Structure probing data (2A3 and DMS) for a 177-nucleotide construct.

RNA sequence: GGGAACGACUCGAGUAGAGUCGAAAAGUCCUCACCUGUGGGCCAGGAAAGUUCUUGCCAAGACCCUCCUUAUUCCCAUUGAGCCACAGGGUGGGCAGAACUCGGAGGCCUCUGAGGGUCAGAGGCCCAGGGCAGCUGUAUUCGUACAGCUGCCCUGAAAAGAAACAACAACAACAAC
Reactivity to 2A3 in 0.01 (KOAc 150mM, MgCl2 10mM, bicine 150mM(pH8.5), 24C), signal-to-noise 2, nucleotides 027 to 126: g020u000c000c010u010c090a260c010c010u000g000u090g020g060g130c020c050a060g000g090a060a030a010g040u050u040c040u120u110g070c000c020a050a020g050a080c010c000c000u000c010c030u130u090a130u020u090c000c000c030a070u060u190g030a060g030c000c000a010c000a020g020g010g010u010g010g000g040c030a020g070a100a020c020u000c020g110g050a070g000g020c030c000u000c000u000g070a130g060g070g030u060c000a000g000a000g000g000c020c010
Reactivity to DMS in 0.01 (KOAc 150mM, MgCl2 10mM, bicine 150mM(pH8.5), 24C), signal-to-noise 1, nucleotides 027 to 126: g010u000c000c000u000c010a030c040c000u000g060u000g030g000g000c060c010a030g000g010a080a040a110g000u000u020c010u000u010g000c100c010a090a080g000a020c010c020c000u000c090c040u000u000a100u000u000c000c000c000a120u060u040g000a070g020c010c000a010c050a000g000g010g020u000g030g000g000c020a020g060a090a130c010u000c010g010g000a120g000g010c000c000u020c000u020g000a220g000g000g050u010c000a060g000a000g000g000c000c010
The reactions ran in a buffer of 150 mM KOAc, 10 mM MgCl2 and 150 mM bicine (pH 8.5), at 24 C. For 2A3 the reverse transcriptase was SuperScript II with manganese.